This 177-nucleotide RNA was probed chemically with 2A3 and DMS. The DMS profile rests on 11,717 reads. The RNA was probed in 150 mM KOAc, 10 mM MgCl2 and 150 mM bicine (pH 8.5) at 24 C.

RNA sequence: GGGAACGACUCGAGUAGAGUCGAAAAUCUAUUGCAAAAUCAAUGAAACACCUGACCUUUUUCGCCACAUACUUUCGAUGCGGGUAAAUAGCAAACAGGCCAAAUUCUAAGGUGGUAUAUCUCGCUACAACAUAACACUUUUCGAAGUGUUAUGUUGAAAAGAAACAACAACAACAAC
Reactivity to 2A3 in 0.01 (KOAc 150mM, MgCl2 10mM, bicine 150mM(pH8.5), 24C), signal-to-noise 7, nucleotides 027 to 126: u000c020u020a080u040u090g040c050a050a030a070a180u130c030a020a100u100g060a110a090a020c030a020c020c010u040g050a080c030c020u040u040u020u070u080c030g010c010c000a050c010a080u150a150c060u090u140u140c080g080a060u090g020c050g000g000g030u060a080a140a050u090a060g030c040a020a050a060c020a030g070g000c010c020a080a120a060u120u020c060u100a080a020g050g000u010g030g030u040a080u020a010u060c050u010c010g040c030u070a060
Reactivity to DMS in 0.01 (KOAc 150mM, MgCl2 10mM, bicine 150mM(pH8.5), 24C), signal-to-noise 9, nucleotides 027 to 126: u010c040u000a050u010u010g010c110a090a080a130a110u010c060a050a050u000g000a100a120a090c070a040c020c020u000g010a060c060c010u000u000u000u010u010c080g020c010c020a060c150a100u010a060c080u000u010u010c080g010a110u000g010c080g000g000g000u000a030a060a080u000a080g020c070a040a040a060c120a050g000g010c020c030a050a060a100u000u010c110u000a080a070g010g020u000g010g010u000a060u000a090u010c030u000c040g020c140u000a150

For 2A3 the reverse transcriptase was SuperScript II with manganese. Source: RMDB library OK2TRN, as collected in RNAgym.